[RMDB]
About this RNA:
Structure probing data (2A3 and DMS) for a 207-nucleotide construct. The data come from the RNA Mapping Database (RMDB), library M2RFPK. Reactivities are rounded to 0.1 and cut off at 0 and 3. The DMS profile rests on 1,578 reads. For 2A3, 1,897 sequencing reads were counted. Conditions: 150 mM KOAc, 10 mM MgCl2 and 150 mM bicine (pH 8.5), 24 C.
RNA sequence: GGGAACGACUCGAGUAGAGUCGAAAACAUAGCGUUUCACAAUGUGCGCCAUUAACAUUGUUUAUGCAAGCACGUUUCGCAAUGUACGGCGCAGAAACAUUGCCAACAUAAAUACGCUUCACGAUGUAAAACAUCGGUGCGUUCGCGCACCGAUGAAGCGAUGACUAAAGUUCGCUUUAGUCAUCGCAAAAGAAACAACAACAACAAC
Reactivity to 2A3 in 0.01 (KOAc 150mM, MgCl2 10mM, bicine 150mM(pH8.5), 24C), signal-to-noise 3, nucleotides 027 to 156: c040a120u150a010g000c000g000u010u160u170c130a070c020a010a010u020g000u000g020c000g000c010c000a050u130u130a060a020c010a010u040u040g070u060u070u130a110u100g080c070a090a070g150c050a020c190g010u050u080u020c030g030c020a020a000u000g010u020a020c060g010g000c010g020c010a000g020a000a050a000c000a000u000u050g040c020c010a050a030c040a110u160a080a110a000u130a010c030g020c000u090u090c100a080c150g110a090u140g050u300a080a070a040a060c000a040u000c000g000g020u000g000c000g010u030u020c240g000c000g000c030a030c020c010g000a000u000g000a010a000
Reactivity to DMS in 0.01 (KOAc 150mM, MgCl2 10mM, bicine 150mM(pH8.5), 24C), signal-to-noise 1, nucleotides 027 to 156: c080a110u000a080g000c130g000u000u000u000c050a110c050a100a120u000g020u010g030c020g070c010c010a080u010u010a050a110c010a030u000u010g020u000u010u000a070u040g020c030a100a250g060c070a130c090g000u000u030u000c120g010c050a030a000u000g020u000a130c080g000g020c000g000c020a100g010a190a140a100c000a060u000u000g000c010c060a060a120c060a030u000a050a090a120u000a080c000g000c020u000u000c100a090c150g010a170u000g000u000a070a060a160a170c020a000u000c010g030g000u020g120c030g010u000u000c150g000c090g050c020a000c000c010g010a000u010g000a030a140